[RMDB]
The record gives the reactivity of an RNA of 207 nucleotides to 2A3. Conditions: 150 mM KOAc, 10 mM MgCl2 and 150 mM bicine (pH 8.5), 24 C. The data come from the RNA Mapping Database (RMDB), library OK3TST.

RNA sequence: GGGAACGACUCGAGUAGAGUCGAAAAUGAUUUGGCUGCUUCAACAGCUCAGGCCAGAGCUAGUGACAGCAUGAAUUAGGACAGGGACUGGGAGAGUGACAGUAGGGUUUGAGAGAAGUGAGUAGGUUCAAGGAGUAUAUAAGGAGAUUGGGUGCGAGUCCAUACUCACCUUCGGGUGAGUAUGGACAAAAGAAACAACAACAACAAC
Reactivity to 2A3 in 0.01 (KOAc 150mM, MgCl2 10mM, bicine 150mM(pH8.5), 24C), signal-to-noise 2, nucleotides 027 to 156: u220g020a030u050u030u100g040g000c000u010g040c110u190u110c020a100a150c040a060g020c000u000c000a030g140g070c060c070a010g000a010g000c000u040a130g060u010g070a030c020a040g050c040a020u080g050a020a150u060u050a030g050g050a000c010a060g000g000g000a000c000u030g020g060g000a010g000a000g000u030g030a050c010a020g020u060a040g000g010g000u030u050u140g050a090g000a020g000a030a000g030u030g010a020g000u040a010g070g020u000u070c030a020a000g040g000a030g050u060a140u030a070u030a250a000g050g000a050g000a010u000u120g000g000g000u020g030c000g010a070